RNA sequence: GGGAACGACUCGAGUAGAGUCGAAAAACAGAGCGAGAUCCCGUCUUACGAAUUUAAAAAAGACAAAAACAAAACCACAAUCGCUAUAGUCCUCAGGAUCAGGUCCCUGUUAAACACUCUCCAGCCAUGUGAUUAGUUACAAGUUCAAGUGUGAUGAUAGUAAUUUAUCGUUCGCGAUAAAUUACUAAAAAGAAACAACAACAACAAC
Reactivity to DMS in 0.01 (KOAc 150mM, MgCl2 10mM, bicine 150mM(pH8.5), 24C), signal-to-noise 2, nucleotides 027 to 156: a090c060a060g030a040g050c080g010a180g000a110u000c020c020c020g000u020c040u000u000a150c120g020a110a150u010u020u000a000a030a060a110a050a020g000a130c020a060a080a040a120a130c040a100a050a080a080c020c020a060c070a090a080u000c040g040c020u000a040u000a160g010u000c020c020u000c020a060g010g020a060u000c030a080g000g010u020c010c010c010u000g020u000u000a070a050a080c060a050c030u000c000u000c020c000a070g000c040c010a090u010g020u000g020a090u000u000a070g000u000u000a040c040a020a090g030u000u030c030a050a070g040u000g040u010g010a100u020g020a280
Reactivity to 2A3 in 0.01 (KOAc 150mM, MgCl2 10mM, bicine 150mM(pH8.5), 24C), signal-to-noise 3, nucleotides 027 to 156: a010c040a000g070a030g020c040g030a020g030a090u050c000c010c000g010u010c020u020u030a080c070g090a200a180u110u170u300a170a110a070a010a000a010g060a030c070a010a160a040a050a000c060a040a100a000a040c030c020a080c050a090a060u050c040g000c020u030a030u070a140g050u060c010c020u020c020a010g030g020a050u060c020a030g010g050u020c010c000c000u000g030u060u090a030a100a030c020a010c030u010c000u010c030c010a020g000c000c010a040u040g040u020g040a070u050u060a030g040u050u040a040c020a120a070g050u070u130c040a060a050g060u040g030u030g080a060u100g010a010
An RNA of 207 nucleotides, treated with DMS and 2A3 and read out base by base. For 2A3, 1,467 sequencing reads were counted. High DMS reactivity at an A or C suggests that its Watson-Crick edge is free. Source: RMDB library OK3TST, as collected in RNAgym. For DMS the reverse transcriptase was MarathonRT.